[RMDB]
RNA sequence: GGGAACGACUCGAGUAGAGUCGAAAACAGCUCACAUGGAGAAUCAGAGAAUGGGACAGUGCCACAAAACAGUCUACUGAGGCACAAGUUCUGAGUGCCUGGGAAGUGGUAGAGAGACCCCAGAGAGGCGAUGACGUGACUUCGGUCACGUCGUCGCAAAAGAAACAACAACAACAAC
Reactivity to 2A3 in 0.01 (KOAc 150mM, MgCl2 10mM, bicine 150mM(pH8.5), 24C), signal-to-noise 3, nucleotides 027 to 126: c020a050g020c010u040c040a050c000a100u200g090g000a030g010a070a060u110c070a040g050a000g030a120a120u090g010g000g010a030c060a100g120u020g100c030c000a070c000a000a140a090a040c050a060g060u040c020u080a120c020u110g060a050g010g000c000a010c040a130a030g080u180u070c050u060g080a030g080u030g000c000c010u010g000g050g000a160a110g050u060g050g000u120a000g030a020g000a030g020a100c000c000c000c020a030g040a010g020a030g080
Reactivity to DMS in 0.01 (KOAc 150mM, MgCl2 10mM, bicine 150mM(pH8.5), 24C), signal-to-noise 3, nucleotides 027 to 126: c080a100g010c020u020c020a100c140a080u050g020g010a130g000a060a060u020c010a030g010a100g030a070a060u020g000g030g010a080c110a060g000u010g000c010c030a050c050a060a070a160a150c050a040g000u000c030u010a050c060u000g000a020g000g000c000a090c090a060a060g010u030u000c080u010g000a060g000u010g000c140c000u000g000g000g010a130a110g020u000g000g020u010a030g010a050g020a140g000a140c060c000c000c020a090g000a140g010a080g020
This 177-nucleotide RNA was probed chemically with 2A3 and DMS. Conditions: 150 mM KOAc, 10 mM MgCl2 and 150 mM bicine (pH 8.5), 24 C. 2A3 adducts were read by reverse transcription with SuperScript II with manganese.